Structure probing data (2A3 and DMS) for a 177-nucleotide construct. It was measured as part of the RMDB libraries RFM100 and RFMREP. 2A3 adducts were read by reverse transcription with SuperScript II with manganese. Reactivities are given for positions 27 through 126.
[RMDB]
RNA sequence: GGGAACGACUCGAGUAGAGUCGAAAAAGUACUUACGAGUACAAUGAAGUGCUGUGGAUUUCUUUGUGAAUCACCAUAUCUAAGCUAAUGUGGUGGUGGUUUACAAAGUAAUUCAUAGUGCUUCAAAUCUCAAUCACGAAUUCGUUCGUGAUUGAGAAAAAGAAACAACAACAACAAC
Reactivity to 2A3 in 0.01 (KOAc 150mM, MgCl2 10mM, bicine 150mM(pH8.5), 24C), signal-to-noise 6, nucleotides 027 to 126: a000g000u000a000c000u080u030a040c270g090a010g000u000a010c040a020a110u140g010a000a000g010u020g000c000u010g000u010g000g000a000u000u000u030c000u010u000u000g000u000g000a000a000u010c000a000c000c000a010u060a080u140c040u080a080a120g120c060u140a210a130u250g060u100g150g020u010g000g000u000g000g000u000u000u000a000c000a010a000a000g000u010a000a000u000u000c000a000u000a000g000u000g000c000u000u000c000a000a000a000
Reactivity to DMS in 0.01 (KOAc 150mM, MgCl2 10mM, bicine 150mM(pH8.5), 24C), signal-to-noise 2, nucleotides 027 to 126: a110g010u000a010c000u000u010a160c190g030a090g000u010a010c000a210a150u010g000a000a010g020u000g000c010u000g030u000g020g010a000u000u000u000c000u000u000u000g010u000g030a030a010u000c000a000c000c000a020u020a080u030c080u010a040a120g010c300u000a070a080u050g010u000g010g010u000g000g030u000g000g020u020u000u000a010c000a000a000a010g010u000a000a000u000u000c000a010u000a010g060u010g000c000u010u000c000a030a030a110